[RMDB]
RNA sequence: GGGAACGACUCGAGUAGAGUCGAAAAGAAGAGAAGCGCGCGAAUUGGAAACCAGCGAACCAUAUUACGCGCGCAAGGAACCGGGCCUUGGUUCUUUGGAAAGAAUAGAUAAUGUCGCUGGUAAAGAGGUAAUUAUCCUCUUCGGAGGAUAAUUACCAAAAGAAACAACAACAACAAC
Reactivity to 2A3 in 0.01 (KOAc 150mM, MgCl2 10mM, bicine 150mM(pH8.5), 24C), signal-to-noise 4, nucleotides 027 to 126: g100a020a000g130a000g010a130a000g040c000g000c010g000c020g020a020a030u020u030g020g010a090a070a160c000c000a000g000c000g000a040a060c010c000a020u090a040u200u080a070c010g010c000g000c000g000c000a010a000g000g000a000a010c010c010g060g190g060c030c030u100u120g030g000u000u000c000u000u020u040g070g060a120a050a010g040a080a070u180a130g110a070u140a180a020u120g070u080c000g000c010u010g000g000u020a010a040a010g060a010
Reactivity to DMS in 0.01 (KOAc 150mM, MgCl2 10mM, bicine 150mM(pH8.5), 24C), signal-to-noise 2, nucleotides 027 to 126: g020a150a060g020a230g030a150a160g000c000g010c000g050c000g030a050a020u000u020g000g010a300a100a020c010c000a000g020c000g010a030a210c010c010a020u040a070u040u050a060c060g020c000g000c000g020c000a000a000g000g010a000a030c040c000g000g000g000c060c080u040u010g010g000u000u000c000u000u000u010g000g040a050a130a110g000a060a120u010a060g010a070u030a040a100u010g010u020c010g030c010u000g000g000u080a090a140a040g010a190

The record gives the reactivity of an RNA of 177 nucleotides to 2A3 and DMS.
The reactions ran in a buffer of 150 mM KOAc, 10 mM MgCl2 and 150 mM bicine (pH 8.5), at 24 C.
It was measured as part of the RMDB library OK1LIB.
The 2A3 profile rests on 3,356 reads.